[RMDB]
RNA sequence: GGGAACGACUCGAGUAGAGUCGAAAAGGCGUGGUGGCCGAGAAGGUGCGCAACCUGCCGGCUGGCCACGGACUGAACGCUCAGACCGGUGUCUACGAGGAUCUGCUCGCUGCCGGCGUUGCUGACCGCCGGAGGAUUUAUUCGUAAAUCCUCCGGCAAAAGAAACAACAACAACAAC
Reactivity to DMS in 0.01 (KOAc 150mM, MgCl2 10mM, bicine 150mM(pH8.5), 24C), signal-to-noise 3, nucleotides 027 to 126: g000g000c030g010u000g000g020u040g000g010c000c000g000a100g030a120a020g000g000u010g010c300g010c210a170a040c000c030u000g000c160c020g030g010c040u000g000g030c000c000a010c010g000g010a070c040u000g000a100a100c180g020c030u000c040a060g000a130c030c000g020g000u000g010u020c120u020a190c080g000a080g010g010a120u060c070u040g010c000u000c000g020c090u000g000c040c030g010g030c080g000u000u000g000c020u010g000a070c200c120
Reactivity to 2A3 in 0.01 (KOAc 150mM, MgCl2 10mM, bicine 150mM(pH8.5), 24C), signal-to-noise 5, nucleotides 027 to 126: g030g010c000g010u010g010g010u030g020g000c010c020g020a030g030a070a020g020g020u070g040c210g030c170a030a020c000c000u030g080c010c000g000g000c000u100g190g020c000c000a000c010g000g000a010c010u010g010a100a010c070g060c070u050c020a060g020a240c000c000g010g000u060g040u040c090u100a060c040g020a040g070g050a260u060c030u220g110c010u030c040g080c070u080g030c000c000g030g010c010g020u030u080g000c020u030g040a040c000c050
Source: RMDB library OK1LIB, as collected in RNAgym.
The record gives the reactivity of an RNA of 177 nucleotides to DMS and 2A3.
2A3 adducts were read by reverse transcription with SuperScript II with manganese.
Conditions: 150 mM KOAc, 10 mM MgCl2 and 150 mM bicine (pH 8.5), 24 C.
The DMS profile rests on 5,615 reads.